The record gives the reactivity of an RNA of 177 nucleotides to 2A3 and DMS.
Reactivities are given for positions 27 through 126.
For DMS the reverse transcriptase was MarathonRT.
For 2A3 the reverse transcriptase was SuperScript II with manganese.
The reactions ran in a buffer of 150 mM KOAc, 10 mM MgCl2 and 150 mM bicine (pH 8.5), at 24 C.
RNA sequence: GGGAACGACUCGAGUAGAGUCGAAAAGGAGGCGGUGGCCUGUCGUGCUGGCAGAAAUUGCGGAGCAUGGUGGCCGGUCCGCAAUGAUAAUCUCAUCACAACAGCAGGUCGAUCUUCAGUGUAGACCGCGAUAUUAUGACUUCGGUCAUAAUAUCGCAAAAGAAACAACAACAACAAC
Reactivity to 2A3 in 0.01 (KOAc 150mM, MgCl2 10mM, bicine 150mM(pH8.5), 24C), signal-to-noise 6, nucleotides 027 to 126: g200g010a040g050g000c030g010g020u050g010g000c010c010u060g100u060c010g010u000g020c010u010g060g030c240a010g100a070a210a060u280u120g000c000g040g040a000g000c010a030u040g020g000u040g040g000c010c010g000g030u000c000c000g000c000a000a030u080g010a010u030a170a100u040c020u010c040a150u090c060a020c030a090a130c020a050g170c040a060g000g040u020c010g060a080u020c030u110u120c060a100g070u050g030u180a020g040a020c000c030
Reactivity to DMS in 0.01 (KOAc 150mM, MgCl2 10mM, bicine 150mM(pH8.5), 24C), signal-to-noise 3, nucleotides 027 to 126: g020g020a070g020g010c020g000g030u050g000g000c000c010u020g020u020c030g020u010g000c020u000g020g020c040a030g000a050a070a110u050u000g000c010g020g020a060g050c030a020u000g000g030u030g000g010c020c010g000g010u000c000c000g000c030a030a010u030g020a130u030a100a150u020c050u000c040a130u010c090a060c190a100a050c130a070g000c130a140g000g020u000c020g000a100u000c050u020u030c070a090g000u030g010u010a150g000a030c070c010